[RMDB]
This 177-nucleotide RNA was probed chemically with DMS. The DMS profile rests on 714 reads. It was measured as part of the RMDB library OK2TRN. DMS adducts were read by reverse transcription with MarathonRT.

RNA sequence: GGGAACGACUCGAGUAGAGUCGAAAACACCAGGGUUGAAAACCUGGGGGAUGACCUGUGGUUAGGGGUGAAAGGCCAAUCAAACUCCGUGAUAGCUGGUUCUCCCCGAAAUGCAUUUAGGUGCAGCCACAGACCGACAGUUCGCUGUCGGUCUGUGAAAAGAAACAACAACAACAAC
Reactivity to DMS in 0.01 (KOAc 150mM, MgCl2 10mM, bicine 150mM(pH8.5), 24C), signal-to-noise 1, nucleotides 027 to 126: c130a080c040c010a000g000g020g060u020u010g050a150a080a090a090c040c000u000g000g000g000g000g000a080u010g000a100c000c000u000g010u000g000g000u010u030a190g000g000g010g030u000g000a020a090a300g000g000c010c120a070a050u000c030a050a040a160c150u010c160c160g000u030g010a000u000a220g010c000u010g010g000u000u000c070u000c000c000c000c000g000a010a080a060u000g000c010a010u000u000u010a080g000g000u000g010c010a000g000c060

About this RNA: Conditions: 150 mM KOAc, 10 mM MgCl2 and 150 mM bicine (pH 8.5), 24 C.